[RMDB]
RNA sequence: GGGAACGACUCGAGUAGAGUCGAAAAAAAUGAAUGAACAUCAACUGAGAGAACUACUAUAUACAACCAUUGAUGAUUGGAAUGAGAACCCAAUCAUUAAGUUCUUAGUUCUAACCUAUAUUGUUCAAGGUAAAAUAUCAAUGAGAAUGUACAACCACAUCCACCACCGAUUCGUCGGUGGUGGAUGAAAAGAAACAACAACAACAAC
Reactivity to 2A3 in 0.01 (KOAc 150mM, MgCl2 10mM, bicine 150mM(pH8.5), 24C), signal-to-noise 1, nucleotides 027 to 156: a000a000a000u230g010a040a120u010g000a010a000c000a030u110c030a010a080c120u090g040a050g000a010g000a140a060c000u040a000c060u040a010u000a050u040a300c060a060a020c090c060a070u010u060g000a000u010g000a000u000u000g000g000a030a080u140g010a180g000a170a030c000c000c000a000a000u000c030a000u000u010a030a000g000u000u090c000u060u060a000g000u040u020c000u040a010a100c010c000u000a040u010a070u150u010g000u030u110c000a000a000g010g000u060a020a000a110a150u240a030u010c060a100a020u020g010a050g040a100a070u120g040u130a020c010a010a050c000c050a040